About this RNA: Structure probing data (DMS) for a 207-nucleotide construct. Source: RMDB library OK3TST, as collected in RNAgym.
RNA sequence: GGGAACGACUCGAGUAGAGUCGAAAACGUCCAGUAUCUUUGUCGAUGAUGCCAGGGUUCAUGAUUACGCCUUGUCUGUGCGGAUAUGGCGGGCGAUAGCUGAGCAGGUGACGACAGCGCCGAUCAUGAGAGUCCACGUCCAGCCUGUUGCAAGGUAUACUUUCUGUCGAUUCGUCGACAGAAAGUAAAAAGAAACAACAACAACAAC
Reactivity to DMS in 0.01 (KOAc 150mM, MgCl2 10mM, bicine 150mM(pH8.5), 24C), signal-to-noise 1, nucleotides 027 to 156: c090g010u010c010c030a130g000u000a050u000c050u000u000u020g010u000c050g060a110u000g000a090u000g000c050c030a120g000g000g000u000u060c030a060u020g020a120u000u010a080c010g010c010c010u000u000g030u010c040u000g000u000g040c050g040g010a080u000a010u000g000g030c010g010g040g020c030g050a130u000a120g020c040u000g010a110g030c050a100g070g020u010g010a240c060g000a110c030a120g010c060g000c030c000g000a060u000c020a080u000g020a110g000a140g050u010c010c000a090c040g000u000c020c010a070g020c010c030u010g020u000u000g000c030a090a040g000g010u000a160
The RNA was probed in 150 mM KOAc, 10 mM MgCl2 and 150 mM bicine (pH 8.5) at 24 C.